Structure probing data (DMS and 2A3) for a 170-nucleotide construct. The DMS profile rests on 36,396 reads. Source: RMDB library 15KLIB, as collected in RNAgym. Values cover nucleotides 27 to 129. The RNA was probed in 150 mM KOAc, 10 mM MgCl2 and 150 mM bicine (pH 8.5) at 24 C.
[RMDB]
RNA sequence: GGGAACGACUCGAGUAGAGUCGAAAAUGAAUUCUGUUCACAGCAUACGCUUUAUAUUAAGGAUGGCGACGAUGGUUACUUCCUUCCUUAUCCAGACCCUUCAAGAAUUUUGUCUGCCGGUUGCUUUAAGGGGAUUAGUUCGCUAAUCCCAAAAGAAACAACAACAACAAC
Reactivity to DMS in 0.01 (KOAc 150mM, MgCl2 10mM, bicine 150mM(pH8.5), 24C), signal-to-noise 8, nucleotides 027 to 129: u000g020a090a080u020u020c070u040g000u010u020c050a070c050a070g000c070a080u060a070c120g020c060u020u020u010a080u030a090u070u040a060a050g000g020a080u030g040g010c200g010a060c070g000a070u030g030g020u030u050a000c110u030u030c000c000u010u050c030c020u020u030a010u040c110c060a000g020a060c000c000c000u000u000c060a050a070g010a010a070u000u020u010u020g010u000c070u050g050c080c070g030g010u000u030g000c060u000u000u000a110a120g050
Reactivity to 2A3 in 0.01 (KOAc 150mM, MgCl2 10mM, bicine 150mM(pH8.5), 24C), signal-to-noise 9, nucleotides 027 to 129: u170g040a020a110u140u000c030u120g110u090u080c080a050c020a090g050c020a040u090a180c110g020c050u070u160u110a200u070a090u150u180a060a020g070g000a030u030g020g030c050g010a020c030g050a050u110g060g030u090u040a050c020u070u050c000c000u010u060c000c000u030u040a030u060c000c020a000g020a090c000c000c000u040u030c020a070a050g070a120a070u060u040u030u110g040u000c050u010g020c010c010g040g000u020u090g010c030u020u040u060a090a020g030